[RMDB]
An RNA of 177 nucleotides, treated with DMS and read out base by base. DMS adducts were read by reverse transcription with MarathonRT.

RNA sequence: GGGAACGACUCGAGUAGAGUCGAAAACAGUUUGGCAGCCUCAGCAUCGAUGAGGAGCCCGUCGCCGACUACCUGGGCGAGCUCAACACCGGCGACGGCAGCGGAGGUCUCUCGGCCAGCAACGAGCAGCCGUCAUAUGUUUCGACAUAUGACGGCUAAAAGAAACAACAACAACAAC
Reactivity to DMS in 0.01 (KOAc 150mM, MgCl2 10mM, bicine 150mM(pH8.5), 24C), signal-to-noise 2, nucleotides 027 to 126: c000a110g020u000u000u000g010g050c040a210g030c030c030u010c030a000g050c080a170u000c120g010a160u010g040a130g000g010a110g010c080c000c000g050u000c000g010c020c020g010a090c110u000a090c260c040u010g000g000g000c070g020a110g000c050u000c020a060a070c230a170c060c000g000g020c020g000a010c030g000g000c100a030g000c050g000g000a030g000g000u000c120u020c030u000c060g000g000c030c030a150g020c100a050a070c160g010a080g000c160